[RMDB]
RNA sequence: GGGAACGACUCGAGUAGAGUCGAAAACAAGAAAGGUUUGACUUUUAAUAGUAUAAUUACGAAUAAAUGUGGGACAUGUAUAUGUGGCUACACAGACCAUGUAUAUGAUGGUCAAGACUAUGAAGUACGCACUAUACUCAUUCGUGAGUAUAGUGCGAAAAGAAACAACAACAACAAC
Reactivity to 2A3 in 0.01 (KOAc 150mM, MgCl2 10mM, bicine 150mM(pH8.5), 24C), signal-to-noise 2, nucleotides 027 to 126: c070a070a060g220a290a160a030g130g000u130u130u090g040a040c000u030u090u120u080a100a080u040a050g020u030a070u060a300a240u270u110a040c020g010a040a040u120a140a030a000u130g020u080g060g020g020a000c000a020u030g050u020a010u010a020u060g020u020g020g080c000u090a050c070a020c000a100g100a090c000c010a000u010g110u000a030u000a000u110g220a020u020g030g000u000c000a070a000g060a000c020u000a010u110g010a030a010g040u060a010
Reactivity to DMS in 0.01 (KOAc 150mM, MgCl2 10mM, bicine 150mM(pH8.5), 24C), signal-to-noise 2, nucleotides 027 to 126: c070a110a180g010a110a090a140g030g000u000u000u000g010a080c010u010u010u010u010a100a080u020a070g000u000a040u000a090a080u000u040a070c060g000a100a080u020a020a060a050u040g010u000g000g020g000a040c010a030u000g020u000a030u010a010u000g020u000g010g010c010u030a040c240a120c300a070g000a060c040c010a010u000g020u010a060u000a030u000g010a040u000g000g000u000c030a100a090g000a040c050u000a030u000g000a070a100g010u010a150
Structure probing data (2A3 and DMS) for a 177-nucleotide construct. The reactions ran in a buffer of 150 mM KOAc, 10 mM MgCl2 and 150 mM bicine (pH 8.5), at 24 C. The 2A3 profile rests on 747 reads.